An RNA of 207 nucleotides, treated with 2A3 and read out base by base. The reactions ran in a buffer of 150 mM KOAc, 10 mM MgCl2 and 150 mM bicine (pH 8.5), at 24 C. It was measured as part of the RMDB library ARCHII. The 2A3 profile rests on 1,124 reads. Values cover nucleotides 27 to 156.
RNA sequence: GGGAACGACUCGAGUAGAGUCGAAAAUCGAGAGGGUCAAGUAACGUAAAAGGCGUUGCUAGUGGAGGUUUUGGAACCGAAACCUCUGCUACAUCAUCAAAUUGCGGGGACAUCCUAAAGCUGGUGCUACUAAGCAGGUGCCGAAACGACUUGUGGCGCAUUCAAUGGAGUUCGCUCCAUUGAAUGCAAAAGAAACAACAACAACAAC
Reactivity to 2A3 in 0.01 (KOAc 150mM, MgCl2 10mM, bicine 150mM(pH8.5), 24C), signal-to-noise 2, nucleotides 027 to 156: u150c050g000a000g020a000g020g070g020u070c070a020a070g020u030a050a050c030g010u040a060a070a050a040g100g000c050g010u020u030g050c080u000a000g010u010g040g000a020g020g030u010u000u010u030g150g030a070a100c170c020g020a010a000a000c000c000u000c000u000g000c000u010a020c000a040u010c020a010u010c020a000a100a150u110u070g030c080g000g020g010g000a060c030a070u120c030c040u160a130a100a000g040c070u030g010g000u010g010c030u000a030c010u020a050a000g030c020a010g100g000u020g100c010c000g050a050a020a030c020g070a040c010u030u030g020u050g070g020c060